[RMDB]
RNA sequence: GGGAACGACUCGAGUAGAGUCGAAAAAUCAGCGGCAGCUUUGGGUAAGAAAUGUGGAAAGUUAUUAUCCCGGAUAUUCAGCCAGAUACUGCAGCCUGAGUCAAGGAACUUUAUGGCAGAAUUAAGGGAGAUGCAUAUACUUCGGUAUAUGCAUCUCAAAAGAAACAACAACAACAAC
Reactivity to DMS in 0.01 (KOAc 150mM, MgCl2 10mM, bicine 150mM(pH8.5), 24C), signal-to-noise 3, nucleotides 027 to 126: a120u000c050a050g020c070g010g020c040a050g010c130u010u000u010g020g010g010u010a050a100g010a030a080a070u010g010u000g020g010a080a060a090g010u000u000a070u000u000a120u010c020c000c050g000g010a120u010a060u010u000c040a070g000c020c040a050g000a080u000a070c050u000g010c070a060g000c030c010u010g020a140g010u020c070a080a060g010g010a060a120c100u000u000u000a080u010g020g000c010a040g020a040a040u000u000a110a140g000g010
Reactivity to 2A3 in 0.01 (KOAc 150mM, MgCl2 10mM, bicine 150mM(pH8.5), 24C), signal-to-noise 2, nucleotides 027 to 126: a030u020c040a000g030c050g040g020c040a020g020c090u070u060u140g030g000g000u010a010a070g040a090a140a030u140g010u110g040g030a090a030a060g020u120u080a140u070u020a040u120c000c000c050g010g000a050u070a060u110u050c000a010g000c020c000a020g010a030u080a090c020u020g080c030a020g110c010c020u030g000a010g020u040c080a050a040g030g010a090a030c000u090u060u070a110u130g020g000c010a010g050a110a120u120u070a030a030g110g030

The record gives the reactivity of an RNA of 177 nucleotides to DMS and 2A3. In probing experiments dimethyl sulfate is read out at A N1 and C N3, which are open when not base-paired. DMS adducts were read by reverse transcription with MarathonRT. It was measured as part of the RMDB library OK2TST.